[RMDB]
RNA sequence: GGGAACGACUCGAGUAGAGUCGAAAAGGAAACUUCUUACAUAAAAGUGGCUCAGAUACUAAACGCAAAUUCCGCCACAAUAGUGCCGGAUACGCCUUAGGCGUCUACGCGCAAACUCCUUCAGAAGACUUCAUUUAUGGUUCGCCAUAAAUGAAGUAAAAGAAACAACAACAACAAC
Reactivity to DMS in 0.01 (KOAc 150mM, MgCl2 10mM, bicine 150mM(pH8.5), 24C), signal-to-noise 4, nucleotides 027 to 126: g000g000a120a120a130c050u000u000c030u010u010a110c110a100u010a050a050a060a120g030u010g010g010c000u010c160a070g010a070u010a060c080u000a020a090a160c240g000c070a050a100a120u020u000c010c050g010c190c000a020c020a090a090u010a070g020u010g010c300c010g010g000a020u000a030c170g010c000c050u020u000a090g010g000c030g020u000c070u000a080c100g000c100g020c050a070a060a070c070u000c020c020u000u000c150a060g000a080a090g000
Reactivity to 2A3 in 0.01 (KOAc 150mM, MgCl2 10mM, bicine 150mM(pH8.5), 24C), signal-to-noise 4, nucleotides 027 to 126: g090g030a060a090a030c040u060u030c010u070u170a120c060a180u300a110a170a010a030g020u020g040g000c010u020c130a010g020a090u040a120c050u160a100a200a090c050g010c050a020a040a120u110u010c020c010g000c020c000a020c000a020a160u140a100g040u010g030c020c000g010g000a010u000a020c030g020c000c010u120u080a090g020g050c010g000u000c030u050a040c050g020c010g000c030a030a050a110c050u040c020c000u110u130c030a060g030a170a020g060
Structure probing data (DMS and 2A3) for a 177-nucleotide construct. For DMS the reverse transcriptase was MarathonRT. For 2A3, 3,870 sequencing reads were counted. Conditions: 150 mM KOAc, 10 mM MgCl2 and 150 mM bicine (pH 8.5), 24 C. Values cover nucleotides 27 to 126. As a SHAPE reagent, 2A3 marks flexible, mostly unpaired nucleotides at the ribose 2'-OH.